This 177-nucleotide RNA was probed chemically with 2A3 and DMS.
The RNA was probed in 150 mM KOAc, 10 mM MgCl2 and 150 mM bicine (pH 8.5) at 24 C.
For 2A3 the reverse transcriptase was SuperScript II with manganese.
RNA sequence: GGGAACGACUCGAGUAGAGUCGAAAACGCUCUGUUUUCACUGGAACAGGGAGUGCAGACGGAUAAUCCGGAAAUGCUUCGCGGCUACAGUGAGCUGGUCAAGUGCCUGCAUCUUCAGCAGCAGCAAGUUUUAGUCCCGAUUCGUCGGGACUAAAACAAAAGAAACAACAACAACAAC
Reactivity to 2A3 in 0.01 (KOAc 150mM, MgCl2 10mM, bicine 150mM(pH8.5), 24C), signal-to-noise 6, nucleotides 027 to 126: c020g020c010u000c000u000g060u030u000u020u040c090a080c020u040g020g020a040a010c010a020g030g020g010a020g030u050g050c020a010g040a150c010g000g020a120u100a230a090u140c000c000g010g010a070a180a020u100g010c010u040u090c030g050c070g140g000c040u090a030c030a020g010u020g060a030g020c030u020g020g000u100c040a130a100g060u060g170c020c010u010g000c010a060u060c070u150u110c080a040g000c010a010g000c000a010g000c020a080a070
Reactivity to DMS in 0.01 (KOAc 150mM, MgCl2 10mM, bicine 150mM(pH8.5), 24C), signal-to-noise 2, nucleotides 027 to 126: c010g020c010u010c000u010g000u000u000u000u030c020a070c000u010g000g010a050a120c050a010g000g000g000a040g000u000g010c110a120g020a130c030g000g000a210u010a060a130u000c010c010g010g050a060a160a090u030g010c060u000u010c050g000c110g010g000c020u010a030c040a020g000u010g010a160g010c000u010g000g010u010c070a060a070g000u040g000c060c010u000g000c020a080u000c040u000u020c220a040g020c000a030g030c040a070g000c070a160a100